[RMDB]
RNA sequence: GGGAACGACUCGAGUAGAGUCGAAAAGAUAUGGAUCCUGGUAGCAACAGCCGUUGGUCGGAAACGACCAUACGGACAUGCUACGCAGGAUCCUAAGUCAAAACUGUGUUAGUUCGCUAACACAGAAGCCAUGGAUAUACUUCGGUAUAUCCAUGGCAAAAGAAACAACAACAACAAC
Reactivity to DMS in 0.01 (KOAc 150mM, MgCl2 10mM, bicine 150mM(pH8.5), 24C), signal-to-noise 2, nucleotides 027 to 126: g010a000u010a020u010g010g000a000u000c000c000u000g010g010u000a010g000c030a150a100c290a190g000c000c000g000u000u010g000g000u000c000g030g000a000a020a060c010g020a010c000c000a000u030a000c020g010g010a010c060a110u010g010c000u000a010c000g000c000a000g000g000a000u000c000c000u000a000a080g000u000c000a070a090a100a220c020u010g020u000g000u000u000a010g010u000u020c290g050c000u000a000a000c000a020c000a010g010a070a150
Reactivity to 2A3 in 0.01 (KOAc 150mM, MgCl2 10mM, bicine 150mM(pH8.5), 24C), signal-to-noise 2, nucleotides 027 to 126: g000a020u010a000u060g010g000a010u000c020c000u010g070g000u010a000g000c170a080a170c100a300g000c000c000g010u010u020g020g020u020c000g010g000a000a000a020c000g010a020c000c020a010u150a020c020g020g020a020c010a160u300g000c010u000a000c020g070c000a010g000g000a000u020c000c000u010a020a000g010u020c000a000a000a130a230c040u010g010u000g020u020u020a030g000u020u060c300g050c180u000a000a000c000a000c000a000g020a020a020

The data come from the RNA Mapping Database (RMDB), library TTRDES. The record gives the reactivity of an RNA of 177 nucleotides to DMS and 2A3. The 2A3 profile rests on 4,171 reads. For DMS the reverse transcriptase was MarathonRT.